[RMDB]
RNA sequence: GGGAACGACUCGAGUAGAGUCGAAAAACUGCCUUUUUUUCGUUUUAGUUUACUUAUUGUGAAAUGUAAAUAUGUCCCACUGCUCAAUUUUUAACGGGACUCCAGGUUUUAGUUACUUAUUAUGAAAUCAUAAGUGUAUCUUCGGAUACACUUAUGAAAAAGAAACAACAACAACAAC
Reactivity to DMS in 0.01 (KOAc 150mM, MgCl2 10mM, bicine 150mM(pH8.5), 24C), signal-to-noise 2, nucleotides 027 to 126: a050c110u010g020c040c010u030u000u020u010u020u000u000c050g010u000u000u000u010a100g010u000u020u000a020c040u010u000a060u010u010g020u010g010a080a070a080u000g010u000a020a070a030u000a080u000g000u010c010c000c010a150c150u000g010c110u000c060a020a050u000u010u010u000u000a040a100c090g010g010g010a010c030u010c150c190a070g000g010u000u010u000u010a110g010u000u000a040c080u010u000a050u010u010a090u010g000a090a110a100